[RMDB]
Structure probing data (DMS and 2A3) for a 177-nucleotide construct. The RNA was probed in 150 mM KOAc, 10 mM MgCl2 and 150 mM bicine (pH 8.5) at 24 C. The data come from the RNA Mapping Database (RMDB), library OK1LIB. For 2A3, 1,950 sequencing reads were counted.
RNA sequence: GGGAACGACUCGAGUAGAGUCGAAAACACAAAAAGCUGAUGCUGCCGGAGCGGUCAUCCGUAAGUAUUUCAGGAGUAAAUUCGACAUUAUUCAGAAAGACGACCUCUGUCCAGUAAACAAACAAAACACCAGUAGGGAGUUCGCUCCCUACUGGUGAAAAGAAACAACAACAACAAC
Reactivity to DMS in 0.01 (KOAc 150mM, MgCl2 10mM, bicine 150mM(pH8.5), 24C), signal-to-noise 1, nucleotides 027 to 126: c000a210c190a060a100a110a180a070g000c000u010g000a030u030g010c080u000g000c140c010g000g000a000g020c050g000g040u020c080a020u000c050c000g000u000a080a090g000u000a030u020u020u000c000a090g010g030a050g000u050a000a040a230u020u010c110g010a030c020a070u000u000a000u050u000c030a090g000a030a000a060g000a060c140g000a100c030c000u000c000u010g000u030c010c010a030g010u000a040a060a000c110a020a090a100c210a120a120a090a180
Reactivity to 2A3 in 0.01 (KOAc 150mM, MgCl2 10mM, bicine 150mM(pH8.5), 24C), signal-to-noise 3, nucleotides 027 to 126: c090a000c050a000a080a040a000a030g080c030u020g020a040u040g000c010u030g020c000c000g000g000a030g010c080g030g080u140c040a150u030c020c000g050u030a100a030g040u010a100u040u120u080c030a020g020g070a040g020u110a070a130a070u070u020c050g000a000c080a080u050u060a040u060u010c020a010g080a040a080a000g030a010c000g050a060c000c000u000c070u080g040u000c020c050a020g030u210a050a080a030c080a020a100a020c010a000a150a030a000